Structure probing data (2A3 and DMS) for a 177-nucleotide construct. DMS adducts were read by reverse transcription with MarathonRT. The reactions ran in a buffer of 150 mM KOAc, 10 mM MgCl2 and 150 mM bicine (pH 8.5), at 24 C. The 2A3 profile rests on 1,348 reads. Source: RMDB library OK2TRN, as collected in RNAgym.
[RMDB]
RNA sequence: GGGAACGACUCGAGUAGAGUCGAAAACACCGGUUUGUCGGUCAGCGACUGCGCGUAGGUGAUCCACUCGACCGUCAUCGCCCGCGGCCGGGACACGUCGCCGUACAGGAUCGGCGGACGCACACAGCGUAGGAGAGCGAUUCGUCGCUCUCCUACGAAAAGAAACAACAACAACAAC
Reactivity to 2A3 in 0.01 (KOAc 150mM, MgCl2 10mM, bicine 150mM(pH8.5), 24C), signal-to-noise 2, nucleotides 027 to 126: c030a050c000c000g040g060u100u060u290g240u280c020g050g000u100c090a040g050c030g090a060c060u050g040c010g030c070g050u110a070g000g020u090g070a200u140c050c000a040c050u100c080g100a110c060c030g050u140c050a050u040c090g020c010c020c000g000c010g020g010c000c000g000g010g000a040c050a000c060g020u040c000g020c000c000g000u050a080c050a190g170g110a170u070c000g000g010c000g070g070a020c050g010c020a000c000a010c000a040g080
Reactivity to DMS in 0.01 (KOAc 150mM, MgCl2 10mM, bicine 150mM(pH8.5), 24C), signal-to-noise 2, nucleotides 027 to 126: c080a170c030c000g010g010u000u000u000g050u020c000g050g030u000c160a100g010c060g000a030c130u000g010c030g020c100g020u000a100g020g010u000g010a070u000c160c060a130c020u000c010g020a060c080c000g000u000c060a120u000c000g030c020c030c010g010c000g000g000c000c000g040g000g010a070c120a070c050g000u000c040g000c000c010g030u010a100c190a160g010g000a090u000c010g020g010c000g000g020a020c010g040c070a080c110a090c100a100g000